This 177-nucleotide RNA was probed chemically with 2A3 and DMS. 2A3 adducts were read by reverse transcription with SuperScript II with manganese. In probing experiments dimethyl sulfate is read out at A N1 and C N3, which are open when not base-paired.
RNA sequence: GGGAACGACUCGAGUAGAGUCGAAAACACUCUUCGCUCCGGACCAGCUCAGCCUCUGAUAAGCUGGACUCGGCACGCCCGCAACAAGCACCGAGGAGUUAAGAGAGCCGCAAGCGCAGGGAAGGCCAUACCGAGAACGAUUCGUCGUUCUCGGUAUAAAAGAAACAACAACAACAAC
Reactivity to 2A3 in 0.01 (KOAc 150mM, MgCl2 10mM, bicine 150mM(pH8.5), 24C), signal-to-noise 4, nucleotides 027 to 126: c040a010c000u020c000u020u040c040g010c020u010c010c020g060g040a090c000c010a010g000c000u030c040a030g040c060c000u120c040u070g100a130u070a180a030g000c000u020g030g000a040c030u010c020g030g010c010a050c080g020c000c010c010g060c030a030a120c040a090a010g020c020a010c030c000g010a020g010g000a020g000u040u040a050a010g030a000g010a010g030c000c020g050c060a080a060g010c030g010c060a020g000g020g040a060a020g040g010c020c000
Reactivity to DMS in 0.01 (KOAc 150mM, MgCl2 10mM, bicine 150mM(pH8.5), 24C), signal-to-noise 4, nucleotides 027 to 126: c140a190c040u020c010u010u020c060g000c020u010c090c030g000g000a160c000c020a020g000c030u000c060a110g020c060c020u000c020u010g000a150u060a070a160g000c020u000g010g010a160c060u000c050g010g040c110a130c070g020c020c040c050g010c070a090a070c170a080a110g000c050a110c050c020g040a080g010g000a070g000u010u010a090a100g000a100g000a140g020c010c040g050c080a110a080g030c050g000c010a030g010g000g010a070a090g010g000c050c110